About this RNA: Structure probing data (2A3) for a 207-nucleotide construct. 2A3 adducts were read by reverse transcription with SuperScript II with manganese. The RNA was probed in 150 mM KOAc, 10 mM MgCl2 and 150 mM bicine (pH 8.5) at 24 C.

[RMDB]
RNA sequence: GGGAACGACUCGAGUAGAGUCGAAAAUGAAUACACUUAAUGCUACUAAUCUGAACACUUAAAAAUGGCUAAGAUGGUAAAUUUUGUGUUAUGUGUGUUGUACCAGAAUUUACUGAAAGUAGGGAGGCUGUGGUUCUUGUGUACCAUUGCAAGGCACCUAGAAUAAAAGCUUCGGCUUUUAUUCUAGAAAAGAAACAACAACAACAAC
Reactivity to 2A3 in 0.01 (KOAc 150mM, MgCl2 10mM, bicine 150mM(pH8.5), 24C), signal-to-noise 1, nucleotides 027 to 156: u080g050a030a030u120a100c060a000c060u110u090a120a060u090g050c000u020a030c050u070a180a070u040c020u020g070a080a000c070a020c040u010u000a030a070a000a060a050u080g020g000c030u070a000a000g040a060u030g000g020u000a030a030a100u080u100u020u050g100u000g040u040u120a090u130g050u000g060u000g000u090u010g020u000a000c010c000a000g000a010a010u050u110u040a030c050u050g150a170a090a070g020u110a030g020g010g010a020g030g000c030u000g010u000g040g010u050u080c000u030u140g060u010g040u140a030c020c000a010u020u070g050c050a010a010g040g000c110a020c300